[RMDB]
RNA sequence: GGGAACGACUCGAGUAGAGUCGAAAAUUUAGUGGUUUGCUAUUUGUAAAAUACAGGCUUUUUCAUGUAUCAUAUAAGCAUAUAAGCUGGCUUAAUCAUUAGUAUUGAUCUUCAAGUUACUAAGACAGUUUAUCUACGUUUUCGAACGUAGAUAAACAAAAGAAACAACAACAACAAC
Reactivity to 2A3 in 0.01 (KOAc 150mM, MgCl2 10mM, bicine 150mM(pH8.5), 24C), signal-to-noise 3, nucleotides 027 to 126: u020u020u020a030g010u010g030g030u050u010u050g010c020u030a090u180u130u110g050u060a120a100a040a020u090a040c060a050g050g080c000u080u090u020u080u210c040a040u040g030u050a060u090c060a020u100a030u040a300a030g000c010a010u040a010u010a080a030g010c010u020g030g000c020u060u060a040a030u060c030a060u030u030a020g030u020a060u050u080g030a050u040c030u100u040c030a070a030g020u030u020a050c020u050a020a030g050a080c040a020
Reactivity to DMS in 0.01 (KOAc 150mM, MgCl2 10mM, bicine 150mM(pH8.5), 24C), signal-to-noise 4, nucleotides 027 to 126: u000u000u010a050g030u000g010g030u000u000u010g010c070u010a090u010u020u010g010u020a070a100a040a050u020a040c120a100g000g010c190u000u010u000u000u020c140a070u010g010u010a040u000c110a100u020a110u000a060a110g000c030a030u000a050u000a070a070g000c040u000g000g010c060u000u010a050a070u000c040a030u000u000a030g010u000a040u000u000g010a090u010c070u000u010c080a080a100g010u010u000a020c080u010a040a080g010a120c220a070